[RMDB]
RNA sequence: GGGAACGACUCGAGUAGAGUCGAAAAAUACUUCUCAGGAUGGCGCGUUGCAGUCCAACAAGAUCCAGGGACUGUACAGAAUUUUCCUAGACCUCGAGUCGGGUUUGGAAUCUAAGGUUGACUCGCUAAAACUUUACGUGGUUCGCCACGUAAAGAACAAAAUUUAUCUGUUCGCAGAUAAAUUUUGAAAAGAAACAACAACAACAAC
Reactivity to 2A3 in 0.01 (KOAc 150mM, MgCl2 10mM, bicine 150mM(pH8.5), 24C), signal-to-noise 2, nucleotides 027 to 156: a000u130a040c020u050u070c050u000c020a030g100g040a080u120g030g070c040g000c050g170u100u030g000c000a010g000u000c020c000a020a020c070a120a170g070a160u080c070c050a040g000g030g030a000c000u010g010u010a010c040a010g180a110a090u060u070u040u040c000c000u030a050g030a090c010c010u000c040g010a020g000u020c000g000g010g010u030u070u060g020g040a030a010u000c010u070a090a120g050g050u080u080g060a050c000u000c040g000c050u120a130a090a030a100c000u010u010u010a000c000g000u000g010g040u050u070c200g020c060c000a000c000g000u010a000a000a000g000a020a000
Reactivity to DMS in 0.01 (KOAc 150mM, MgCl2 10mM, bicine 150mM(pH8.5), 24C), signal-to-noise 2, nucleotides 027 to 156: a130u000a040c050u000u000c030u000c040a160g010g000a060u000g000g040c080g000c060g010u000u010g020c010a040g030u000c040c010a100a210c030a070a200g010a090u000c020c030a150g020g020g010a010c000u000g010u000a220c080a170g040a110a140u000u000u000u000c010c010u000a080g010a070c040c010u010c020g000a040g010u000c010g010g000g010u010u010u030g030g010a070a110u000c060u000a080a070g000g030u030u000g000a050c060u010c050g000c070u010a060a060a140a100c000u000u000u000a000c000g020u000g000g030u000u000c300g030c030c000a000c010g000u020a000a000a010g000a060a110